RNA sequence: GGGAACGACUCGAGUAGAGUCGAAAAAUCCUAGCAUGCAUGGAUCUCAGGUACCACUAGCGAGACCAUGGAUCAUGAUCUCGGAUCCUGCUAGGCUGAUCACGUACUACGAUCACAUCUCAUGUAGCGGAACUUACUUAUUCGUAAGUAAGUUCCGAAAAGAAACAACAACAACAAC
Reactivity to 2A3 in 0.01 (KOAc 150mM, MgCl2 10mM, bicine 150mM(pH8.5), 24C), signal-to-noise 8, nucleotides 027 to 126: a000u000c000c000u010a030g010c020a020u080g010c010a030u050g020g060a180u000c030u030c080a070g090g000u070a090c020c030a070c170u080a030g050c020g060a020g000a020c010c000a030u070g020g030a040u130c030a070u130g130a090u040c050u050c070g110g000a100u030c000c000u010g000c020u020a030g030g000c050u080g040a090u100c060a020c120g050u040a030c040u040a030c090g020a020u010c020a020c010a180u030c050u020c030a050u130g060u120a030g100
Reactivity to DMS in 0.01 (KOAc 150mM, MgCl2 10mM, bicine 150mM(pH8.5), 24C), signal-to-noise 8, nucleotides 027 to 126: a080u000c010c000u000a060g010c020a080u000g030c300a050u010g000g000a060u010c010u000c100a150g010g010u000a050c050c090a130c110u000a080g000c050g010a020g000a030c020c010a040u010g010g010a090u010c060a060u000g000a050u000c030u000c100g010g000a050u000c020c020u010g000c020u000a030g000g010c130u000g000a070u000c070a130c110g010u000a030c050u000a120c230g000a030u010c020a070c110a060u000c060u000c040a080u000g010u000a110g010